Source information: Source: RMDB library OK2TST, as collected in RNAgym. An RNA of 177 nucleotides, treated with DMS and read out base by base.
[RMDB]
RNA sequence: GGGAACGACUCGAGUAGAGUCGAAAACAGCUGAACAUGAUAAACUUGCCCUUGAAACUUUGCUCAACCCUCCAGUUCAUAUUCAAAGGCAAAUAGAACUCGGAGUUCAUCGACUUUUUCAACAAUCCACUUACGGUCUAUUCGUAGACCGUAAGUGAAAAGAAACAACAACAACAAC
Reactivity to DMS in 0.01 (KOAc 150mM, MgCl2 10mM, bicine 150mM(pH8.5), 24C), signal-to-noise 3, nucleotides 027 to 126: c150a140g030c080u000g000a060a050c040a150u000g000a090u010a040a100a090c120u000u000g000c010c000c030u000u010g000a050a070a110c160u010u000u010g000c000u000c030a090a220c090c050c010u020c010c030a060g000u010u000c030a040u000a060u010u000c050a040a050a110g000g020c060a020a010a030u000a060g010a060a050c140u010c110g010g010a120g010u000u000c060a040u020c060g040a130c130u010u010u000u000u010c050a080a100c190a060a100u000c060
Values cover nucleotides 27 to 126.
DMS adducts were read by reverse transcription with MarathonRT.
The reactions ran in a buffer of 150 mM KOAc, 10 mM MgCl2 and 150 mM bicine (pH 8.5), at 24 C.
The DMS profile rests on 1,751 reads.